[RMDB]
RNA sequence: GGGAACGACUCGAGUAGAGUCGAAAAGAUAUGGACAUAGCAGAGUAAUUCAUGAAGGUCGACGAAGUUCGUCGGAAACGACGAACAGAGACCGGCAUGAAUUACGACGAAGCUAUGUCCUAAGUCACUCCAUCAGUAAGUUCGCUUACUGAUGGAGAAAAGAAACAACAACAACAAC
Reactivity to 2A3 in 0.01 (KOAc 150mM, MgCl2 10mM, bicine 150mM(pH8.5), 24C), signal-to-noise 2, nucleotides 027 to 126: g030a010u090a050u200g020g000a000c010a000u010a010g000c030a010g040a010g100u010a010a000u000u000c020a000u000g010a030a010g010g010u000c010g050a300c030g030a240a040g020u030u000c000g010u010c000g000g040a050a070a010c010g010a010c000g000a000a000c000a010g010a000g010a000c000c000g000g020c000a000u000g000a000a000u000u000a000c000g010a010c000g020a040a020g000c000u000a000u010g000u010c000c000u000a000a000g010u000c010a020
Reactivity to DMS in 0.01 (KOAc 150mM, MgCl2 10mM, bicine 150mM(pH8.5), 24C), signal-to-noise 3, nucleotides 027 to 126: g020a030u010a300u010g000g000a020c000a000u000a010g050c000a070g020a150g000u000a010a010u000u010c000a010u000g010a010a030g010g020u000c010g000a250c220g030a120a110g000u000u000c010g020u000c000g000g000a150a080a200c000g030a020c010g030a010a010c000a060g000a220g010a010c000c010g000g000c000a010u000g000a010a000u000u000a000c010g010a130c230g010a140a120g000c000u000a010u000g000u000c010c000u010a000a040g000u010c050a240

Chemical mapping of a 177-nucleotide RNA with 2A3 and DMS. Values are in units of 0.01, from 0 to 300, in steps of 10.